RNA sequence: GGGAACGACUCGAGUAGAGUCGAAAAAAAGAAGGAGUUACAGCUUUUCCUUCGGAAAGCCGUAUUCUUUGGCCUCCUGCCAUUAUGCUUACCGCUUUGCUUAUUGCUAUAGCAUUGAUAGGCGAUGAAUAUGACUUGUCUUCGGACAAGUCAUAUUAAAAGAAACAACAACAACAAC
Reactivity to DMS in 0.01 (KOAc 150mM, MgCl2 10mM, bicine 150mM(pH8.5), 24C), signal-to-noise 4, nucleotides 027 to 126: a060a050a100g010a040a020g010g000a040g010u000u000a020c020a050g010c010u000u000u000u010c000c130u010u010c210g010g010a020a020a010g010c000c030g000u000a030u000u000c020u000u000u000g010g000c090c030u010c050c050u000g010c050c020a070u000u000a020u000g000c000u000u000a070c180c200g010c060u000u000u000g010c130u000u010a090u000u000g010c070u010a100u010a030g000c000a070u000u000g020a050u000a060g020g010c010g010a080u010g000
Reactivity to 2A3 in 0.01 (KOAc 150mM, MgCl2 10mM, bicine 150mM(pH8.5), 24C), signal-to-noise 2, nucleotides 027 to 126: a000a000a000g060a010a010g020g020a060g030u150u160a070c000a020g020c000u110u030u060u040c000c010u100u120c030g010g000a020a010a000g000c020c010g010u000a060u040u040c000u060u040u060g060g020c000c010u020c000c010u060g030c040c010a060u110u080a020u090g020c010u040u040a070c020c070g040c080u080u090u110g100c070u220u220a090u150u250g000c000u030a030u100a100g010c020a020u020u120g010a010u050a110g000g040c030g050a110u150g070
Conditions: 150 mM KOAc, 10 mM MgCl2 and 150 mM bicine (pH 8.5), 24 C. Structure probing data (DMS and 2A3) for a 177-nucleotide construct.